[RMDB]
RNA sequence: GGGAACGACUCGAGUAGAGUCGAAAAAGAUCAAGCGGCGCAGGUUAAAUCGGAAAUAGUCGUUGCAGACUCCGAUGUAGCGGUGAAAUUUUAGGAGAUAAGGUUGCGGUUGGUGGCUUGGGUCUUGCCGCAGCUCGAAAAUGAAGGCCAAGAUAAGCUUUAGGAAAGUCUUCGGACUUUCCUAAAGAAAAGAAACAACAACAACAAC
Reactivity to DMS in 0.01 (KOAc 150mM, MgCl2 10mM, bicine 150mM(pH8.5), 24C), signal-to-noise 1, nucleotides 027 to 156: a090g030a090u010c070a040a120g000c070g080g060c000g000c060a120g000g000u020u010a040a140a040u010c040g040g000a100a030a220u010a070g000u010c040g010u010u000g030c110a250g010a050c010u000c000c030g020a000u000g030u000a030g080c020g000g000u010g010a010a060a100u020u010u010u000a070g000g010a080g010a020u000a140a140g000g010u000u030g010c020g010g000u000u000g040g020u010g020g000c060u000u000g040g060g010u000c010u020u000g040c020c010g040c020a040g070c020u000c060g000a020a040a100a090u000g010a110a060g000g030c030c010a090a070g000a070u000a080a250g000
Reactivity to 2A3 in 0.01 (KOAc 150mM, MgCl2 10mM, bicine 150mM(pH8.5), 24C), signal-to-noise 1, nucleotides 027 to 156: a000g060a040u070c020a030a020g060c020g040g000c030g000c010a040g000g100u120u180a080a150a040u050c000g000g050a030a070a030u140a060g010u010c010g010u060u200g000c010a010g010a040c020u000c010c020g000a000u030g000u070a000g040c040g040g070u070g080a120a030a080u170u160u150u120a030g000g020a040g020a060u110a060a080g040g000u000u050g010c000g060g000u060u040g000g090u070g030g000c000u010u050g080g000g000u030c050u010u000g040c000c030g000c000a010g000c010u030c030g070a050a060a020a020u120g040a070a030g000g000c000c010a020a000g000a020u090a000a050g030
The record gives the reactivity of an RNA of 207 nucleotides to DMS and 2A3. For 2A3, 629 sequencing reads were counted.